[RMDB]
This 177-nucleotide RNA was probed chemically with 2A3 and DMS. DMS adducts were read by reverse transcription with MarathonRT. The reactions ran in a buffer of 150 mM KOAc, 10 mM MgCl2 and 150 mM bicine (pH 8.5), at 24 C. Reactivities are given for positions 27 through 126. Source: RMDB library TTRDEL, as collected in RNAgym. For 2A3 the reverse transcriptase was SuperScript II with manganese.
RNA sequence: GGGAACGACUCGAGUAGAGUCGAAAAGAUAUGGACUGGGCGAAGAACUAGGUCAGGUCGGAAACGACCUGAGCCUAGGGAGCCUUGUCCUAAGUCAAAGCACGGGAUUCUUCGGAAUCCCGUGCAACAACGUGAACUAGUUCGCUAGUUCACGUUGAAAAGAAACAACAACAACAAC
Reactivity to 2A3 in 0.01 (KOAc 150mM, MgCl2 10mM, bicine 150mM(pH8.5), 24C), signal-to-noise 2, nucleotides 027 to 126: g020a020u050a030u140g010g000a010c020u020g020g000g000c020g170a300a030g020a100a080c010u000a000g010g020u020c000a000g000g000u000c020g040g010a080a060a050c000g010a000c020c010u000g000a010g030c000c000u000a000g010g020g000a010g000c010c000u000u000g000u020c000c000u010a100a020g050u000c040a110a040a050g030c000a000c000g000g010g030a000u010u020c030u110u270c300g120g000a030a000u010c010c020c010g000u000g000c010a000a010
Reactivity to DMS in 0.01 (KOAc 150mM, MgCl2 10mM, bicine 150mM(pH8.5), 24C), signal-to-noise 4, nucleotides 027 to 126: g000a040u010a300u000g010g000a010c010u000g000g000g040c000g000a120a120g010a130a160c000u000a000g000g010u010c000a000g000g020u000c000g020g010a100a070a220c000g010a010c010c000u000g000a050g010c010c000u000a000g000g000g000a110g010c010c000u010u000g000u010c000c000u000a010a080g010u000c020a060a090a140g000c000a010c000g010g000g010a020u000u000c000u000u020c180g030g010a020a000u000c000c000c010g000u000g010c000a010a050